[RMDB]
RNA sequence: GGGAACGACUCGAGUAGAGUCGAAAAGUCUGCGGGUCAAGAGCAAACUAACUGUAAUACUAGUUCCUUAGCUUAUUACGAACCUGUGCAGGGUCGUAAAAUGCUGAUGGCUCUUCUUUCUGAUAAUAGUAUAGUUUUACUUCGGUAAAACUAUACUAAAAGAAACAACAACAACAAC
Reactivity to DMS in 0.01 (KOAc 150mM, MgCl2 10mM, bicine 150mM(pH8.5), 24C), signal-to-noise 4, nucleotides 027 to 126: g010u010c020u010g020c050g010g020g020u000c080a040a110g020a070g030c030a090a070a080c080u000a050a100c100u010g010u010a090a100u010a140c100u000a050g000u000u000c100c040u000u000a020g010c000u010u000a280u000u000a000c010g010a060a050c000c000u010g020u010g030c220a090g000g000g000u000c000g000u000a000a010a040a040u000g000c010u000g010a060u000g010g020c030u000c010u000u000c130u000u010u000c030u000g000a110u010a100a150u000
Reactivity to 2A3 in 0.01 (KOAc 150mM, MgCl2 10mM, bicine 150mM(pH8.5), 24C), signal-to-noise 3, nucleotides 027 to 126: g040u010c020u040g030c040g020g030g020u030c030a030a010g000a020g050c010a080a070a030c010u050a050a020c020u070g050u190a100a060u070a210c060u010a020g030u070u000c000c000u020u010a010g000c000u070u040a050u070u000a080c000g020a060a130c000c010u060g040u130g100c140a060g010g000g010u000c000g010u000a020a010a000a020u060g000c000u010g020a050u080g020g040c010u000c000u090u030c020u010u080u000c020u020g050a060u060a290a060u020